[RMDB]
RNA sequence: GGGAACGACUCGAGUAGAGUCGAAAAGCUCAAGCACCUCGCCGCGCCGCCGGUACGGGUUGGCCUUUGCGGGUGCGCUCACCGUCAUGCUGCGAUACUAGCCAACUGCGGCUUUUCCGCCGGCGCGUGAGCCUAGGCUUUUCGAAGCCUAGGCUCAAAAAGAAACAACAACAACAAC
Reactivity to 2A3 in 0.01 (KOAc 150mM, MgCl2 10mM, bicine 150mM(pH8.5), 24C), signal-to-noise 2, nucleotides 027 to 126: g030c020u030c100a000a000g020c010a070c010c020u110c070g070c040c000g000c000g000c000c010g000c000c000g030g050u060a040c020g020g000g030u010u060g020g000c010c000u080u100u050g000c030g010g030g010u000g000c000g000c010u050c030a140c020c050g130u200c030a030u220g250c040u030g000c010g030a010u060a140c040u140a110g010c000c020a060a100c060u300g300c150g080g000c070u080u000u030u010c020c030g000c000c000g010g000c000g020c030g030
Reactivity to DMS in 0.01 (KOAc 150mM, MgCl2 10mM, bicine 150mM(pH8.5), 24C), signal-to-noise 2, nucleotides 027 to 126: g010c000u010c130a130a120g000c040a070c120c050u020c090g020c090c210g030c030g020c020c030g020c210c010g010g010u020a050c140g000g000g030u000u000g010g020c020c120u000u000u000g020c010g000g030g010u000g010c100g020c090u020c110a120c120c020g030u010c020a060u000g000c020u030g000c020g000a080u020a040c240u000a110g020c000c040a040a020c060u000g010c070g020g000c110u000u030u000u000c060c020g010c170c080g030g030c010g010c050g030
Chemical mapping of a 177-nucleotide RNA with 2A3 and DMS. It was measured as part of the RMDB library OK2TST. For 2A3 the reverse transcriptase was SuperScript II with manganese. Reactivities are rounded to 0.1 and cut off at 0 and 3. For DMS the reverse transcriptase was MarathonRT.